[RMDB]
RNA sequence: GGGAACGACUCGAGUAGAGUCGAAAAGAUAUGGAGGUGCCGGACGCGACGAUCUCCAUGGAGGAGGCGAUAUAUCGGAAACGAUAUAUCGCCUUGAAGUGGAGGGAGCGUCCACACCUCCUAAGUCGCCAAAUCUUAAGUUCGCUUAAGAUUUGGCAAAAGAAACAACAACAACAAC
Reactivity to DMS in 0.01 (KOAc 150mM, MgCl2 10mM, bicine 150mM(pH8.5), 24C), signal-to-noise 1, nucleotides 027 to 126: g010a090u000a240u000g020g000a060g030g010u000g010c080c190g080g020a000c000g010c010g000a040c260g010a010u020c000u010c000c020a010u010g010g000a300g020g000a040g000g060c000g000a030u030a020u000a010u000c030g020g000a060a080a270c020g020a000u000a000u000a010u000c000g000c000c000u000u000g000a120a250g000u000g000g010a030g000g010g010a040g000c010g030u000c000c000a060c010a020c000c000u000c000c000u020a010a080g010u000c090

This 177-nucleotide RNA was probed chemically with DMS.